[RMDB]
RNA sequence: GGGAACGACUCGAGUAGAGUCGAAAAGAUAUGGAGACAUGGAGCUUAAAUGUCGGAAACGACAUGAGCGUUGAAAUGUUCUCCUAAGUCAAACACAUCACAUUGAGUUCGCUCAAUGUGAUGUGAAGUAUAUCCAUUUGUUCGCAAAUGGAUAUACAAAAGAAACAACAACAACAAC
Reactivity to 2A3 in 0.01 (KOAc 150mM, MgCl2 10mM, bicine 150mM(pH8.5), 24C), signal-to-noise 8, nucleotides 027 to 126: g010a000u040a010u090g010g000a000g000a000c000a000u020g020g030a040g000c010u070u040a300a270a060u080g010u010c000g010g000a040a050a020c000g000a000c000a010u020g010a000g000c030g150u230u050g000a010a020a010u030g030u270u020c000u000c000c000u010a080a000g030u010c030a020a140a070c010a000c000a010u000c000a000c000a000u000u010g000a010g040u090u180c300g040c140u000c000a010a000u000g000u010g000a000u000g000u000g000a000a000
Reactivity to DMS in 0.01 (KOAc 150mM, MgCl2 10mM, bicine 150mM(pH8.5), 24C), signal-to-noise 9, nucleotides 027 to 126: g010a020u000a300u010g000g000a010g010a020c000a000u000g010g000a090g020c010u000u010a070a060a050u000g020u000c000g010g000a070a060a130c000g010a010c000a010u000g000a020g010c010g010u000u010g000a100a110a010u000g000u010u000c000u000c000c000u000a020a090g010u000c030a120a100a240c010a010c000a000u000c000a000c000a010u000u000g000a010g010u000u010c290g020c000u000c000a010a000u000g000u000g010a000u000g010u000g000a030a110

The record gives the reactivity of an RNA of 177 nucleotides to 2A3 and DMS. The 2A3 profile rests on 38,959 reads. The reactions ran in a buffer of 150 mM KOAc, 10 mM MgCl2 and 150 mM bicine (pH 8.5), at 24 C. DMS adducts were read by reverse transcription with MarathonRT. 2A3 adducts were read by reverse transcription with SuperScript II with manganese.